[RMDB]
RNA sequence: GGGAACGACUCGAGUAGAGUCGAAAAAUCUCGUGGCUAUUGAGAACGAAUUAAAUCAGAUGGUUCUAUUUCUCAAUCUUUCUGACUUGCUCCUACGAAACCAAGGUCGAAAAGAUUGAAAAAAUCAGUCAUUCACAACCACUGAUGAAGGAUUCCUUCUCUACUAGAGCUUCGGCUCUAGUAGAGAAAAAGAAACAACAACAACAAC
Reactivity to 2A3 in 0.01 (KOAc 150mM, MgCl2 10mM, bicine 150mM(pH8.5), 24C), signal-to-noise 2, nucleotides 027 to 156: a000u020c000u000c010g020u040g090g000c100u100a090u250u240g020a040g000a030a010c030g000a040a060u080u100a120a150a020u020c020a000g230a300u010g000g000u050u000c050u020a110u000u050u040c090u000c000a010a000u000c000u040u000u000c060u110g010a000c010u000u030g040c000u080c050c080u150a090c110g120a090a040a030c070c010a050a010g110g080u030c000g060a000a000a000a000g020a010u000u000g030a000a030a000a000a000a000u150c150a020g180u070c060a080u260u050c080a070c010a040a030c010c000a000c020u000g010a020u000g050a020a030g140g000a020u030u050c000c000u050